[RMDB]
RNA sequence: GGGAACGACUCGAGUAGAGUCGAAAACGAUGCGUAUUCACCAUGGAGUAGUAGUUCAGAAGUUCACCCGUCUGAGUUGUGGCACAUUCGAUUAGCUUUCUGAACCAAACUUAGACUAGUAUGAGUGAAAUCAGUGACUCUUCGGAGUCACUGAUUUAAAAGAAACAACAACAACAAC
Reactivity to DMS in 0.01 (KOAc 150mM, MgCl2 10mM, bicine 150mM(pH8.5), 24C), signal-to-noise 3, nucleotides 027 to 126: c100g020a050u030g010c100g000u000a040u000u000c010a090c000c030a070u010g000g000a130g010u010a060g010u010a120g000u000u000c040a030g000a030a070g020u000u000c130a100c060c050c030g010u010c050u000g020a090g010u000u000g030u000g030g010c050a100c020a070u010u010c080g010a080u020u010a080g020c080u000u020u010c050u010g020a020a030c010c100a060a090a040c040u000u010a070g010a050c010u030a020g000u030a040u020g010a030g000u010g010
Reactivity to 2A3 in 0.01 (KOAc 150mM, MgCl2 10mM, bicine 150mM(pH8.5), 24C), signal-to-noise 3, nucleotides 027 to 126: c030g100a070u120g030c030g020u080a130u060u070c000a050c020c030a070u100g040g030a060g000u020a020g010u000a020g000u110u020c040a000g040a040a040g020u020u040c030a070c010c010c000g070u010c100u050g040a050g090u030u050g160u200g230g000c010a000c040a130u050u060c090g010a130u070u000a020g040c000u050u100u000c010u070g030a010a010c000c030a070a000a000c010u070u070a050g050a080c060u020a030g090u050a120u180g050a030g060u070g030

Background:
Structure probing data (DMS and 2A3) for a 177-nucleotide construct. The 2A3 profile rests on 978 reads. For DMS the reverse transcriptase was MarathonRT. The data come from the RNA Mapping Database (RMDB), library OK1LIB. The reactions ran in a buffer of 150 mM KOAc, 10 mM MgCl2 and 150 mM bicine (pH 8.5), at 24 C. The DMS profile rests on 4,769 reads.